[RMDB]
RNA sequence: GGGAACGACUCGAGUAGAGUCGAAAAAACGAACGAGACCUUAACCUGCUAAAUAGCCCGGUCCGCUUUGGCGGGCCGCUGGCUUCUUAGAGGGACUAUCGGCUCAAGCCGAUGGAAGUUUGAGGCACACUAGAAACAAAUUCGUUUGUUUCUAGUGAAAAGAAACAACAACAACAAC
Reactivity to DMS in 0.01 (KOAc 150mM, MgCl2 10mM, bicine 150mM(pH8.5), 24C), signal-to-noise 9, nucleotides 027 to 126: a080a060c100g020a100a100c150g000a100g010a150c020c010u000u000a050a140c000c000u000g010c000u000a010a010a060u000a010g000c000c010c010g010g010u000c000c010g020c010u000u040u050g020g030c010g020g010g000c000c000g010c090u020g010g000c000u000u000c090u000u000a010g000a080g010g000g010a200c020u000a010u000c000g000g000c010u020c220a130a150g010c000c000g000a010u000g000g000a100a080g000u010u000u010g000a030g000g010c080a300
Reactivity to 2A3 in 0.01 (KOAc 150mM, MgCl2 10mM, bicine 150mM(pH8.5), 24C), signal-to-noise 9, nucleotides 027 to 126: a000a000c070g050a050a010c060g040a040g110a160c010c000u020u010a040a060c000c010u100g210c010u150a020a030a040u050a040g000c000c000c010g000g000u010c000c000g020c040u180u110u270g170g010c000g000g000g000c000c000g000c010u020g000g000c000u000u000c000u000u000a000g010a020g000g010g020a010c020u020a010u000c000g010g020c030u100c250a140a070g000c000c000g000a000u020g010g020a080a040g030u030u070u100g030a030g000g000c020a000
Chemical mapping of a 177-nucleotide RNA with DMS and 2A3.
DMS (dimethyl sulfate) methylates the pairing face of unpaired adenines and cytosines.
For DMS the reverse transcriptase was MarathonRT.
The reactions ran in a buffer of 150 mM KOAc, 10 mM MgCl2 and 150 mM bicine (pH 8.5), at 24 C.
Values cover nucleotides 27 to 126.